[RMDB]
RNA sequence: GGGAACGACUCGAGUAGAGUCGAAAACUAAGAUACCUAGCCUGCAGGGCAUGACACCCUCUCACUAUAGUAACUUCCUUCCAUCUUGAUUUCCACUUCUUAGAACUCAUGCUCUAGAAACUAGAAACACUAGUAUGAGUUUCGACUCAUACUAGUGAAAAGAAACAACAACAACAAC
Reactivity to DMS in 0.01 (KOAc 150mM, MgCl2 10mM, bicine 150mM(pH8.5), 24C), signal-to-noise 4, nucleotides 027 to 126: c060u010a100a100g000a080u040a050c040c030u000a090g010c040c010u010g000c090a040g000g000g010c020a030u000g000a080c140a110c080c010c020u010c020u000c010a080c050u020a030u020a080g010u050a050a090c060u010u000c020c000u000u000c020c030a020u010c040u020u020g000a120u010u000u000c020c030a050c060u010u000c050u040u000a050g020a080a070c070u010c020a030u010g000c030u000c000u010a060g000a100a060a080c050u000a060g010a140a060a110
Reactivity to 2A3 in 0.01 (KOAc 150mM, MgCl2 10mM, bicine 150mM(pH8.5), 24C), signal-to-noise 9, nucleotides 027 to 126: c040u070a060a030g050a100u160a100c020c010u020a030g050c020c020u060g040c050a040g030g010g000c020a030u060g020a010c010a060c030c020c000u020c000u010c020a060c050u090a070u060a160g100u080a120a090c020u050u050c020c000u030u040c020c020a070u040c050u050u120g050a080u080u040u010c020c010a040c030u060u040c010u040u130a040g030a070a010c010u020c040a040u100g010c010u000c000u030a030g080a050a070a030c040u030a030g100a050a090a010
Structure probing data (DMS and 2A3) for a 177-nucleotide construct. For 2A3 the reverse transcriptase was SuperScript II with manganese. DMS adducts were read by reverse transcription with MarathonRT.